[RMDB]
RNA sequence: GGGAACGACUCGAGUAGAGUCGAAAAGGCAUGCGAGCAGCUGGUAUAGUGCCUGUGGGUCAUCGCGACCUUAUCUACGUGCUCACCCAGGUGUCGUCAGCGGUGUCGCGCAAUCCGCAGAUUUUCACUAUACUGGAUAUUUCGAUAUCCAGUAUAGAAAAGAAACAACAACAACAAC
Reactivity to 2A3 in 0.01 (KOAc 150mM, MgCl2 10mM, bicine 150mM(pH8.5), 24C), signal-to-noise 9, nucleotides 027 to 126: g050g010c040a020u160g010c020g020a020g020c010a010g020c010u030g000g030u130a140u080a150g070u060g030c000c010u030g040u120g030g010g010u050c040a060u160c100g020c040g050a100c010c000u030u040a120u050c050u060a050c020g020u040g000c010u010c020a070c000c010c000a030g020g040u040g040u090c050g010u030c020a020g010c030g040g030u080g050u050c020g000c010g000c030a010a040u020c000c010g020c050a020g040a150u100u060u030u050c040a040
Reactivity to DMS in 0.01 (KOAc 150mM, MgCl2 10mM, bicine 150mM(pH8.5), 24C), signal-to-noise 9, nucleotides 027 to 126: g010g010c050a060u010g030c040g010a150g010c040a070g010c020u000g000g010u000a110u010a100g020u010g010c040c020u000g020u010g010g000g010u000c070a090u000c100g010c140g000a050c100c080u000u010a060u010c060u010a140c130g010u000g000c070u000c130a120c110c040c030a080g010g010u000g000u010c050g010u000c060a050g010c060g010g010u000g010u000c030g020c040g010c140a090a070u000c020c020g020c090a110g000a160u000u000u000u000c080a180